This 207-nucleotide RNA was probed chemically with 2A3 and DMS. The RNA was probed in 150 mM KOAc, 10 mM MgCl2 and 150 mM bicine (pH 8.5) at 24 C. It was measured as part of the RMDB library RNAMAK.

RNA sequence: GGGAACGACUCGAGUAGAGUCGAAAAGGGGUCGCAAAUCGAGUCGAGGGUGGAGCUUGGAUUUAUAGUCUGAAGCCUCCACGGACUAUUGUCAGCUCCUCCUCGACUAAGACAGUUUGCGACGGAGGCACCCAAAAGGUCUACUUCGGUAGACCAAACAAGAAUACCGAUUCGUCGGUAUUCUUGUAAAAGAAACAACAACAACAAC
Reactivity to 2A3 in 0.01 (KOAc 150mM, MgCl2 10mM, bicine 150mM(pH8.5), 24C), signal-to-noise 4, nucleotides 027 to 156: g060g010g060g010u010c020g000c010a000a010a000u070c010g030a010g000u000c020g010a020g020g060g150u300g030g000a020g010c060u160u230g170g020a050u170u300u060a010u050a000g000u000c010u010g050a070a020g010c000c000u000c000c000a010c010g000g000a000c000u010a000u000u030g030u030c090a090g020c010u020c000c000u010c000c000u000c000g000a000c000u000a000a000g000a000c010a000g020u000u000u000g010c000g000a000c010g000g000a000g000g000c000a040c000c010c000a020a140a020a070g000g000u000c000u000a010c030u060u130c300g070g000u010a000g000a000c010c010a020a010
Reactivity to DMS in 0.01 (KOAc 150mM, MgCl2 10mM, bicine 150mM(pH8.5), 24C), signal-to-noise 2, nucleotides 027 to 156: g000g000g010g000u000c020g040c030a010a030a020u000c030g060a060g020u010c010g000a050g020g000g010u000g020g010a050g090c010u000u000g020g020a050u000u010u000a070u000a060g010u000c000u000g000a050a170g010c010c020u020c010c010a300c080g000g000a030c010u010a000u050u000g020u020c060a080g000c010u010c010c000u000c010c010u000c000g010a010c010u010a010a060g000a090c300a040g010u000u000u010g030c000g010a020c030g000g000a050g070g030c010a080c020c000c020a060a070a120a070g010g020u000c000u000a010c010u000u000c300g040g020u020a020g020a010c000c000a000a050